[RMDB]
RNA sequence: GGGAACGACUCGAGUAGAGUCGAAAAGCUGUCACAAGGGAUUCCAUUUCCAGUUCUGCGAUCUGGAAGGCGAUCUGGAAAUUGCGCGUAGUGGCAGGUGAAUAGGGAUUGAGAUAAAGUACGCGCAUCCAUUAGUCGAGUUCGCUCGACUAAUGGAAAAAGAAACAACAACAACAAC
Reactivity to DMS in 0.01 (KOAc 150mM, MgCl2 10mM, bicine 150mM(pH8.5), 24C), signal-to-noise 4, nucleotides 027 to 126: g010c020u000g030u010c000a020c010a180a090g010g000g000a110u010u000c050c020a200u000u000u000c000c010a030g000u000u010c030u000g040c160g030a120u000c100u000g010g010a060a090g010g020c250g000a010u000c000u000g010g000a020a040a060u010u000g020c010g010c000g020u000a140g020u010g010g010c000a020g010g030u010g000a100a090u000a100g010g000g010a120u000u010g010a080g000a150u000a070a060a090g010u000a020c000g010c010g020c020a170
Reactivity to 2A3 in 0.01 (KOAc 150mM, MgCl2 10mM, bicine 150mM(pH8.5), 24C), signal-to-noise 3, nucleotides 027 to 126: g020c000u020g030u080c000a030c030a080a080g140g020g050a150u120u060c020c010a010u010u030u010c000c020a000g020u040u000c050u280g060c040g090a210u050c040u120g120g080a050a030g130g000c030g000a020u010c010u030g000g010a000a040a040u080u060g000c020g000c010g000u040a030g020u030g010g020c010a010g020g020u080g100a100a120u170a120g100g020g060a100u050u190g100a170g040a120u180a140a110a010g020u040a000c000g040c000g000c020a010

Annotation:
An RNA of 177 nucleotides, treated with DMS and 2A3 and read out base by base. The reactions ran in a buffer of 150 mM KOAc, 10 mM MgCl2 and 150 mM bicine (pH 8.5), at 24 C. The data come from the RNA Mapping Database (RMDB), library OK2TRN. For 2A3 the reverse transcriptase was SuperScript II with manganese.